[RMDB]
RNA sequence: GGGAACGACUCGAGUAGAGUCGAAAAACCUCAUUAAACAGGUGGCAAAAAACAACUGGCGAACGUGAACUCGUUCUUGCUGGCUAAAUAAGACAGCACAUCCUGCUUGGCCCCACCUCAACGGGUCAGGUUUGGGUGCCGAUUAGUUGAGGUGCCGGAUACGUUAACAGUUCGCUGUUAACGUAUCAAAAGAAACAACAACAACAAC
Reactivity to 2A3 in 0.01 (KOAc 150mM, MgCl2 10mM, bicine 150mM(pH8.5), 24C), signal-to-noise 4, nucleotides 027 to 156: a000c030c000u100c100a190u110u270a120a100a070c120a100g110g030u070g080g000c060a030a070a020a060a120a110c120a060a080c080u120g030g000c010g010a010a000c010g020u050g070a040a040c100u030c050g010u010u000c000u020u020g000c010u000g030g000c000u050a010a150a220u150a170a040g020a020c000a000g010c000a000c010a030u020c000c010u020g000c010u000u010g000g000c000c020c000c010a150c030c030u040c020a030a030c010g000g000g000u000c000a000g040g000u220u300u110g010g000g010u020g000c000c000g130a080u080u160a020g000u000u020g010a010g000g000u010g010c030c040g040
Reactivity to DMS in 0.01 (KOAc 150mM, MgCl2 10mM, bicine 150mM(pH8.5), 24C), signal-to-noise 2, nucleotides 027 to 156: a050c020c010u010c050a120u000u000a110a110a140c000a030g020g010u000g010g000c080a000a050a110a070a100a060c030a060a040c030u010g000g020c080g020a010a020c020g010u000g020a130a080c120u000c010g000u000u000c000u000u010g060c010u000g000g000c020u000a080a090a110u010a100a060g000a080c000a020g030c000a040c030a010u000c000c010u000g000c000u000u010g000g020c060c000c000c030a070c210c160u010c190a140a160c110g020g040g020u000c020a020g010g020u000u010u000g020g030g000u000g020c000c010g040a100u000u000a050g030u000u000g010a110g010g000u000g030c020c050g020

Source: RMDB library ARCHII, as collected in RNAgym. This 207-nucleotide RNA was probed chemically with 2A3 and DMS. For DMS the reverse transcriptase was MarathonRT. For DMS, 3,922 sequencing reads were counted. For 2A3 the reverse transcriptase was SuperScript II with manganese. Values cover nucleotides 27 to 156.